[RMDB]
The record gives the reactivity of an RNA of 207 nucleotides to 2A3.
RNA sequence: GGGAACGACUCGAGUAGAGUCGAAAAAGCUGGUAGUACUACGGUACUACCAGCAUAAUUCAUGGUUCGAAAACCUCCCACGCAAAAAAACUAAGGAAAAACGCCGAGUAGUACGCUACUCGGCGAAGGUACCGGAAUCAGUUCGCUGAUUCCGGAAGUACCAAGCUAAGUUCGCUUAGCUUGGUACAAAAGAAACAACAACAACAAC
Reactivity to 2A3 in 0.01 (KOAc 150mM, MgCl2 10mM, bicine 150mM(pH8.5), 24C), signal-to-noise 1, nucleotides 027 to 156: a000g010c000u000g030g010u000a000g020u010a000c010u020a010c240g090g000u010a010c000u000a000c040c000a040g000c000a000u030a000a000u020u030c040a060u160g010g040u040u040c150g070a090a230a050a080c000c020u020c000c020c000a040c020g120c070a000a080a180a150a060a060a210c130u300a180a180g120g000a070a080a020a000a000c010g000c000c000g000a000g000u020a010g000u050a030c110g000c030u000a000c000u000c000g000g010c000g000a000a000g060g000u020a040c000c000g000g000a000a000u000c000a000g070u070u100c160g040c110u040g000a000u000u000c010c000g000g000a000a000